[RMDB]
RNA sequence: GGGAACGACUCGAGUAGAGUCGAAAAGAUAUGGAGUACGUAACAUCCACCUGCUGAUGACCACGUGAGCGUCGAUCGGAAACGAUCGACGCUCACGUGCAAGGCAUGUGGUGGUACUCCUAAGUCAGAUAUUCAUAGGGUUCGCCCUAUGAAUAUCAAAAGAAACAACAACAACAAC
Reactivity to DMS in 0.01 (KOAc 150mM, MgCl2 10mM, bicine 150mM(pH8.5), 24C), signal-to-noise 1, nucleotides 027 to 126: g010a040u000a300u010g000g000a040g010u000a000c010g000u020a020a020c200a020u030c000c000a030c030c050u000g010c000u010g030a090u000g000a170c300c000a010c020g090u000g020a010g040c000g180u000c000g110a030u000c000g060g010a160a130a250c010g000a000u000c000g030a000c000g070c000u000c000a000c000g070u010g000c020a020a030g030g010c000a000u010g010u000g000g020u000g020g020u010a010c020u000c020c000u010a010a030g020u020c080a180

Source: RMDB library TTRINS, as collected in RNAgym. This 177-nucleotide RNA was probed chemically with DMS. The reactions ran in a buffer of 150 mM KOAc, 10 mM MgCl2 and 150 mM bicine (pH 8.5), at 24 C. The DMS profile rests on 1,060 reads.